[RMDB]
RNA sequence: GGGAACGACUCGAGUAGAGUCGAAAAGCGGCCUCGGCCCCCCUGCUGCACGCCCAGCCGUUUAGGCCGCGGUCAGCGCCGGUUUCCACGCCAGUGUGGGGCUUGAUGCUGUCGCGAAGAGUUCGUCUCUGUUAGCCUGGCAGGGUGUGCUACGCAGCCAAAUUCUGUACUUCGGUACAGAAUUUGGAAAAGAAACAACAACAACAAC
Reactivity to 2A3 in 0.01 (KOAc 150mM, MgCl2 10mM, bicine 150mM(pH8.5), 24C), signal-to-noise 1, nucleotides 027 to 156: g040c030g000g000c030c030u130c300g300g000c000c020c050c010c020c000u000g000c000u000g000c010a000c030g000c000c000c000a000g000c050c010g030u030u140u050a010g000g020c020c000g000c000g030g000u270c000a000g010c000g000c010c010g010g010u020u040u050c000c000a050c030g020c080c150a150g030u140g000u020g240g000g010g040c000u040u300g040a050u050g060c000u000g000u000c000g000c000g000a060a020g000a000g000u140u150c260g190u150c080u000c000u010g090u080u170a000g010c000c010u020g000g010c020a020g000g020g000u040g000u000g010c000u000a000c020g020c000a000g000

The data come from the RNA Mapping Database (RMDB), library ARCHII. An RNA of 207 nucleotides, treated with 2A3 and read out base by base. Reactivities are given for positions 27 through 156. The RNA was probed in 150 mM KOAc, 10 mM MgCl2 and 150 mM bicine (pH 8.5) at 24 C. The 2A3 profile rests on 556 reads. For 2A3 the reverse transcriptase was SuperScript II with manganese.